Structure probing data (2A3 and DMS) for a 177-nucleotide construct. The 2A3 profile rests on 1,587 reads. For DMS, 1,961 sequencing reads were counted. It was measured as part of the RMDB library M2PK50.
RNA sequence: GGGAACGACUCGAGUAGAGUCGAAAAACGGGCACGUUCGCGUGCCCGUAAUGAACGCUGCAACGCGCAGAGAUCUCGCGAGAGGGCGAAUGCACAAAGAAACAUUUCCAGUUUUCGAACUGGAAAAGUAAAGCGCAUUAUUCGUAAUGCGCUUUACAAAAGAAACAACAACAACAAC
Reactivity to 2A3 in 0.01 (KOAc 150mM, MgCl2 10mM, bicine 150mM(pH8.5), 24C), signal-to-noise 1, nucleotides 027 to 126: a030c000g030g030g000c010a010c000g010u070u100c190g000c010g080u000g000c000c000c000g010u000a000a000u010g020a070a030c050g020c060u050g000c050a000a150c070g010c030g030c110a000g040a040g020a200u050c030u050c060g000c020g020a070g040a080g080g000g000c000g040a080a040u120g030c090a040c030a040a140a060g110a020a150a000c000a020u020u020u000c000c010a000g000u000u020u040u090c110g050a020a000c000u010g000g000a000a000a000a000
Reactivity to DMS in 0.01 (KOAc 150mM, MgCl2 10mM, bicine 150mM(pH8.5), 24C), signal-to-noise 3, nucleotides 027 to 126: a030c000g010g000g010c000a000c020g020u010u010c210g050c000g060u000g010c000c000c010g020u000a010a020u000g000a150a110c070g020c040u000g000c040a080a070c140g000c060g030c090a050g000a150g000a080u020c020u000c050g000c190g010a150g000a090g000g010g000c040g000a080a090u010g010c050a060c110a060a070a100g020a120a060a060c140a120u000u010u000c000c000a000g000u000u000u010u010c160g000a010a030c010u000g000g000a000a000a000a100